[RMDB]
RNA sequence: GGGAACGACUCGAGUAGAGUCGAAAAUUAAAGGAGGAGGAGAAAUAUAGCGAGAGAUCGGUCCUCCCACGCGCGUCUCGCGCUGAUAUGAGGAAUAAGAGGAUGAUUAAUAGAUAGCGCGCAAAAACUGUUAAACUAUGUUCGCAUAGUUUAACAGAAAAGAAACAACAACAACAAC
Reactivity to 2A3 in 0.01 (KOAc 150mM, MgCl2 10mM, bicine 150mM(pH8.5), 24C), signal-to-noise 5, nucleotides 027 to 126: u100u060a080a010a020g050g030a030g000g020a000g020g020a040g060a060a170a020u200a040u080a070g070c020g000a020g010a010g000a060u030c030g020g040u000c010c010u010c000c000c000a020c010g030c010g000c010g050u030c020u050c070g000c000g020c020u010g020a010u020a070u180g050a040g070g050a060a050u090a120a040g030a010g080g010a020u050g020a030u090u160a100a090u030a060g060a030u070a040g020c020g000c000g000c020a030a020a010a010a090
Reactivity to DMS in 0.01 (KOAc 150mM, MgCl2 10mM, bicine 150mM(pH8.5), 24C), signal-to-noise 7, nucleotides 027 to 126: u000u020a060a090a090g010g000a080g000g010a040g000g000a070g000a090a090a100u010a090u010a060g020c040g010a040g000a090g010a040u000c060g010g010u000c030c030u000c010c040c050a090c150g010c030g020c030g000u010c050u000c050g010c030g000c020u000g010a070u000a050u000g010a070g000g010a090a060u000a070a090g010a080g000g010a040u000g000a080u000u010a080a100u010a070g000a060u000a060g020c010g000c030g020c140a050a050a060a070a090
Structure probing data (2A3 and DMS) for a 177-nucleotide construct. Conditions: 150 mM KOAc, 10 mM MgCl2 and 150 mM bicine (pH 8.5), 24 C. Reactivities are given for positions 27 through 126. The 2A3 profile rests on 8,094 reads. Source: RMDB library M2PK90, as collected in RNAgym.